[RMDB]
This 207-nucleotide RNA was probed chemically with 2A3.
The reactions ran in a buffer of 150 mM KOAc, 10 mM MgCl2 and 150 mM bicine (pH 8.5), at 24 C.
Values cover nucleotides 27 to 156.

RNA sequence: GGGAACGACUCGAGUAGAGUCGAAAAACCAGUCGCGUGCUGACUCUCACGCCCACCCGCACGGCUGCUCCGAGAGGAGAGCUCUCUGCCGCUAGUCGAGCGGACUCCAGAGUGACUCUCCUACCCUAUUUUCAGCGGAGAGCCGGCGGUGGAGUCCGUUCCAUCUGAAGUUCGCUUCAGAUGGAACAAAAGAAACAACAACAACAAC
Reactivity to 2A3 in 0.01 (KOAc 150mM, MgCl2 10mM, bicine 150mM(pH8.5), 24C), signal-to-noise 1, nucleotides 027 to 156: a000c040c000a000g120u120c100g000c000g020u080g000c020u020g060a090c040u000c000u010c060a000c000g040c050c020c000a060c000c110c050g030c020a260c050g000g000c010u110g050c000u030c000c030g070a070g030a010g070g000a020g000a000g000c000u000c000u000c020u000g000c000c000g000c000u030a040g080u300c090g130a020g000c000g010g010a020c000u010c040c010a000g000a030g100u030g100a200c000u000c010u000c000c000u010a090c020c000c000u010a110u090u250u090u280c030a030g060c000g010g000a000g000a000g020c050c000g000g000c020g000g050u010g010g000a040g040u040c100c030